Annotation
Source: RMDB library TTRDEL, as collected in RNAgym. This 177-nucleotide RNA was probed chemically with 2A3 and DMS. Values are in units of 0.01, from 0 to 300, in steps of 10. Reactivities are given for positions 27 through 126. The reactions ran in a buffer of 150 mM KOAc, 10 mM MgCl2 and 150 mM bicine (pH 8.5), at 24 C. 2A3 adducts were read by reverse transcription with SuperScript II with manganese.
[RMDB]
RNA sequence: GGGAACGACUCGAGUAGAGUCGAAAAGAUAUGGAGCGCAAGACAUGCUAAACUCGGAAACGAGCUAGCAACAGCUUGGCGCUCCUAAGUCAAAACAAUUACCAUGGGUUCGCCCAUGGUAAUUGAACUUAUAUAACAGCUUCGGCUGUUAUAUAAGAAAAGAAACAACAACAACAAC
Reactivity to 2A3 in 0.01 (KOAc 150mM, MgCl2 10mM, bicine 150mM(pH8.5), 24C), signal-to-noise 4, nucleotides 027 to 126: g030a010u030a020u090g000g000a010g000c010g000c020a010a020g060a280c090a220u100g000c000u020a070a100a090c000u000c000g000g020a020a010a010c000g000a000g000c010u010a000g000c010a070a220c060a140g040c010u040u090g290g040c000g000c000u000c000c000u000a010a010g010u000c010a020a000a100a200c010a000a010u000u010a000c010c000a000u000g000g000g060u050u090c300g170c020c000c000a000u000g000g010u000a000a000u000u010g000a000a000
Reactivity to DMS in 0.01 (KOAc 150mM, MgCl2 10mM, bicine 150mM(pH8.5), 24C), signal-to-noise 5, nucleotides 027 to 126: g000a020u000a250u010g000g000a010g020c000g020c010a020a010g010a080c130a190u000g000c000u000a030a130a150c010u000c000g000g000a060a040a140c000g000a000g010c090u000a030g010c000a040a110c280a140g000c000u010u000g010g010c000g000c000u000c000c000u000a000a070g010u000c030a110a070a110a190c010a000a010u000u000a000c000c000a000u000g000g000g010u000u020c260g010c000c000c000a010u000g000g010u010a000a000u000u000g000a080a150